About this RNA: Conditions: 150 mM KOAc, 10 mM MgCl2 and 150 mM bicine (pH 8.5), 24 C. This 177-nucleotide RNA was probed chemically with 2A3 and DMS. For DMS the reverse transcriptase was MarathonRT. The data come from the RNA Mapping Database (RMDB), library OK1LIB.
[RMDB]
RNA sequence: GGGAACGACUCGAGUAGAGUCGAAAACGCAUGGCCGGUCGGCCGCGACGGCAGUGGGGGCAGGGACGGCGGAGGCGUCGCCUCAUGGGCCGCUCUCGAAUCCAGCUCAUGGGGUGGGCGGCAGCAGGCAGCACCAGCCGUUCGCGGUUGGUGCUGCAAAAGAAACAACAACAACAAC
Reactivity to 2A3 in 0.01 (KOAc 150mM, MgCl2 10mM, bicine 150mM(pH8.5), 24C), signal-to-noise 2, nucleotides 027 to 126: c070g030c020a090u140g070g000c040c030g120g040u170c060g060g010c010c030g000c000g010a050c040g010g030c040a000g030u080g000g010g000g000g000c030a110g060g020g030a010c020g040g040c030g040g010a020g010g060c010g030u070c040g000c000c010u020c020a060u020g000g000g000c000c020g040c040u040c010u000c050g080a050a070u010c080c010a030g000c030u010c040a030u020g000g000g020g000u070g040g040g000c000g000g000c000a030g020c060a020g090
Reactivity to DMS in 0.01 (KOAc 150mM, MgCl2 10mM, bicine 150mM(pH8.5), 24C), signal-to-noise 2, nucleotides 027 to 126: c080g000c130a120u000g000g030c020c010g000g020u040c050g030g000c060c050g020c030g010a060c070g000g020c110a090g030u030g000g010g010g000g040c060a090g000g000g060a110c130g040g030c030g020g010a090g030g000c000g060u000c120g000c000c000u000c090a030u000g000g000g010c010c040g030c090u000c060u010c070g000a140a050u060c040c020a170g000c000u000c020a120u000g000g000g010g030u000g000g070g010c000g010g000c090a020g000c050a060g000